RNA sequence: GGGAACGACUCGAGUAGAGUCGAAAAGAUAUGGAGGGCAUAGUUCGCAGUCGGAAACGACUGAACUACGAAGUAUGAACUACCCUCCUAAGUCAAACAUUAUUAGUUACUUCGGUAACUAAUAAUGCGUGGUACUACAGUUCGCUGUAGUACCACGAAAAGAAACAACAACAACAAC
Reactivity to DMS in 0.01 (KOAc 150mM, MgCl2 10mM, bicine 150mM(pH8.5), 24C), signal-to-noise 2, nucleotides 027 to 126: g000a070u000a300u010g000g000a000g000g000g000c080a030u000a020g020u000u000c000g010c020a010g000u000c000g020g010a160a150a160c000g000a030c000u000g000a050a070c120u000a280c190g010a070a030g010u000a080u010g000a040a040c040u030a210c000c000c000u000c000c010u000a010a080g000u000c060a170a110a300c020a000u000u000a000u010u000a010g000u000u000a000c000u000u020c220g030g020u040a000a000c000u000a000a000u000a000a000u000g000
Reactivity to 2A3 in 0.01 (KOAc 150mM, MgCl2 10mM, bicine 150mM(pH8.5), 24C), signal-to-noise 1, nucleotides 027 to 126: g030a020u070a030u210g020g000a020g020g000g010c140a260u060a110g210u010u000c010g050c030a000g000u000c020g070g000a160a050a040c000g040a020c000u010g000a040a020c060u160a070c160g100a080a040g180u130a100u220g000a040a040c040u120a070c160c000c000u000c000c010u000a040a010g010u020c050a080a140a040c010a010u000u010a000u000u010a010g010u000u000a000c000u000u040c300g050g000u000a000a010c000u020a000a000u000a000a000u010g040